The record gives the reactivity of an RNA of 177 nucleotides to 2A3 and DMS. DMS adducts were read by reverse transcription with MarathonRT. 2A3 is a SHAPE reagent: it acylates the 2'-hydroxyl of flexible nucleotides of all four kinds. Values cover nucleotides 27 to 126.
RNA sequence: GGGAACGACUCGAGUAGAGUCGAAAAAGACGGACUUCUGGAGAGACCUAUAAGUAGCAACAUCUUUGUAUUGACACCAAGAUGUGCUCUAGGCGCCGAAGGGGCAAGAAGAGUAAAACAACUCCUCGAACAGAAUUACGUUCGCGUAAUUCUGUUCAAAAGAAACAACAACAACAAC
Reactivity to 2A3 in 0.01 (KOAc 150mM, MgCl2 10mM, bicine 150mM(pH8.5), 24C), signal-to-noise 2, nucleotides 027 to 126: a010g030a040c050g010g020a040c010u000u020c040u210g040g020a180g070a040g060a190c010c000u060a080u030a300a010g160u190a000g000c030a020a130c000a070u010c010u000u020u110g040u020a090u060u300g130a060c040a000c170c000a030a000g000a000u020g010u000g000c010u000c010u000a040g020g000c030g000c020c000g010a040a000g030g000g010g000c040a050a020g030a070a020g000a030g050u100a020a150a020a000c050a000a080c040u020c030c010u070c000
Reactivity to DMS in 0.01 (KOAc 150mM, MgCl2 10mM, bicine 150mM(pH8.5), 24C), signal-to-noise 1, nucleotides 027 to 126: a100g000a080c050g010g020a120c020u000u010c010u000g020g010a100g010a220g020a130c010c010u000a060u040a190a130g030u030a010g010c030a010a020c010a030u000c000u000u000u010g000u010a300u010u010g000a140c250a080c110c060a000a020g000a000u010g010u000g000c010u000c010u010a050g000g030c040g030c110c060g000a040a060g000g000g000g010c000a040a150g020a050a070g000a050g000u010a040a060a120a130c160a070a110c060u000c010c030u000c150